[RMDB]
RNA sequence: GGGAACGACUCGAGUAGAGUCGAAAAAUGAGUGAAAAUCGACUUGGAAUUUGUUCGACAUGCCAAAAAAAUGCUAGUAAAUAUCGUUGUCCAAGAUGCGAUUCACGAUUUUGUUGUUUGGAAUGUAUACCGAUGAUUAUUUCGAUAAUCAUCGGUAAAAAGAAACAACAACAACAAC
Reactivity to DMS in 0.01 (KOAc 150mM, MgCl2 10mM, bicine 150mM(pH8.5), 24C), signal-to-noise 3, nucleotides 027 to 126: a040u000g020a300g000u010g000a060a010a240a050u000c010g000a250c000u000u000g000g010a070a070u020u020u010g010u000u000c020g020a040c100a080u000g000c070c120a000a010a030a100a110a100a080u000g010c050u000a090g000u010a030a060a090u020a090u000c050g020u010u000g010u000c000c020a020a040g000a040u010g010c010g010a040u000u000c000a030c010g000a150u000u000u010u010g020u000u010g010u000u010u000g020g020a030a030u000g010u000a150
Reactivity to 2A3 in 0.01 (KOAc 150mM, MgCl2 10mM, bicine 150mM(pH8.5), 24C), signal-to-noise 1, nucleotides 027 to 126: a000u080g010a010g010u030g030a020a030a020a080u020c010g000a000c000u000u000g000g010a040a050u030u070u200g080u080u040c010g030a040c030a030u100g060c020c030a160a180a000a020a000a000a090u130g020c020u050a020g070u190a140a090a090u120a050u060c030g030u020u190g030u000c000c000a000a020g010a090u180g080c010g010a010u010u000c000a000c030g000a000u000u040u030u040g010u010u010g000u050u000u000g010g220a000a010u010g030u150a070